[RMDB]
RNA sequence: GGGAACGACUCGAGUAGAGUCGAAAAGAUAUGGAUUGAGAACUACACUACUUUUCUCCGAAGAACUCGGAAACGAGGGAGGAGUAUUAGUGCUCAAUCCUAAGUCAAACCUGACUUCGGUCAGGAAGAUGUAAUAAGUGUUCGCACUUAUUACAUCAAAAGAAACAACAACAACAAC
Reactivity to 2A3 in 0.01 (KOAc 150mM, MgCl2 10mM, bicine 150mM(pH8.5), 24C), signal-to-noise 9, nucleotides 027 to 126: g030a020u060a020u110g000g000a000u010u020g010a010g010a060a020c070u180a030c220a030c090u080a050c070u110u110u210u110c010u000c010c030g180a300a160g060a300a200c010u010c000g000g050a070a060a030c020g000a020g050g020g000a010g000g010a000g010u020a030u130u100a010g000u010g010c000u000c000a000a010u000c000c000u000a040a010g000u000c020a050a040a130c000c000u000g000a010c010u040u080c300g080g000u010c010a010g010g010a010a030
Reactivity to DMS in 0.01 (KOAc 150mM, MgCl2 10mM, bicine 150mM(pH8.5), 24C), signal-to-noise 8, nucleotides 027 to 126: g000a030u000a300u010g000g000a020u000u000g000a010g010a070a020c040u010a130c300a070c150u000a010c060u000u000u010u010c010u000c010c010g010a100a130g000a090a300c020u010c000g010g010a060a060a100c000g000a010g010g010g000a020g000g000a010g000u000a020u000u000a000g010u000g010c000u000c000a010a010u000c000c000u000a020a070g000u000c020a080a100a140c010c000u000g010a010c000u000u010c200g020g000u000c000a000g010g010a030a050